[RMDB]
RNA sequence: GGGAACGACUCGAGUAGAGUCGAAAAGAUAUGGAGCCUGUAGGAGGUACACUCACUAGUCACAAAUACAUCGGAAACGAUGUAUUUGUGACUAAAGUGUACUACCCACCCUACUGGCUCCUAAGUCGGUCUAUGUAAUCUUCGGAUUACAUAGACCAAAAGAAACAACAACAACAAC
Reactivity to DMS in 0.01 (KOAc 150mM, MgCl2 10mM, bicine 150mM(pH8.5), 24C), signal-to-noise 1, nucleotides 027 to 126: g020a070u010a300u010g000g010a060g010c010c010u000g010u000a000g000g000a070g020g000u010a000c020a000c000u000c080a130c130u010a010g010u020c000a030c010a000a000a000u000a020c000a020u000c010g000g010a180a130a300c020g050a010u000g020u000a000u020u000u000g020u000g020a000c000u000a030a020a000g000u000g000u000a000c010u000a040c070c060c150a300c030c010c000u020a010c000u000g000g010c000u010c020c000u000a000a040g050u020c100
The data come from the RNA Mapping Database (RMDB), library TTRINS. An RNA of 177 nucleotides, treated with DMS and read out base by base. The DMS profile rests on 912 reads.